[RMDB]
RNA sequence: GGGAACGACUCGAGUAGAGUCGAAAAAAGUGGCGUUGAGAGCUUGGUCCCACGCAACAAGAACUCAUGAACCCCGUCAGGUCCGGAAGGAAGCAGCGGUAAGUGAAUAUUUUUGUGUGCCGUGGAUAAACCUGGUUUGAGUUAACUAUAUGGGUAACAACAUAAAAAACUUCGGUUUUUUAUGUUGAAAAGAAACAACAACAACAAC
Reactivity to 2A3 in 0.01 (KOAc 150mM, MgCl2 10mM, bicine 150mM(pH8.5), 24C), signal-to-noise 2, nucleotides 027 to 156: a000a010g080u030g020g010c030g030u080u080g080a050g000a000g110c030u020u030g010g020u040c010c020c000a000c000g020c000a020a010c000a010a010g010a000a000c020u010c020a020u030g010a040a030c040c010c000c000g040u070c000a010g000g020u000c000c000g090g130a130a110g010g000a010a000g020c010a010g000c020g000g010u010a060a010g000u000g020a030a020u090a100u140u040u000u020u020g040u040g090u060g070c160c030g000u000g000g020a020u070a080a030a000c020c020u020g000g040u020u010u010g030a030g000u070u040a040a000c040u040a030u040a090u300g090g000g020u240a020a020
Reactivity to DMS in 0.01 (KOAc 150mM, MgCl2 10mM, bicine 150mM(pH8.5), 24C), signal-to-noise 1, nucleotides 027 to 156: a030a100g020u000g010g010c030g050u010u000g010a220g010a040g060c050u000u000g010g010u010c010c010c020a040c030g030c010a030a030c030a020a000g000a040a020c010u000c010a050u010g030a160a250c080c090c000c000g000u000c030a240g050g050u010c010c030g030g070a160a200g030g000a090a200g000c060a190g000c030g000g030u010a060a300g000u030g000a060a060u010a040u000u010u000u010u000g020u010g000u000g030c110c050g050u000g000g000a060u010a040a090a030c040c020u010g000g000u000u000u000g000a120g000u000u000a040a050c080u010a070u000a090u010g000g000g010u000a080a120
Chemical mapping of a 207-nucleotide RNA with 2A3 and DMS.
For DMS the reverse transcriptase was MarathonRT.
The RNA was probed in 150 mM KOAc, 10 mM MgCl2 and 150 mM bicine (pH 8.5) at 24 C.
The data come from the RNA Mapping Database (RMDB), library ARCHII.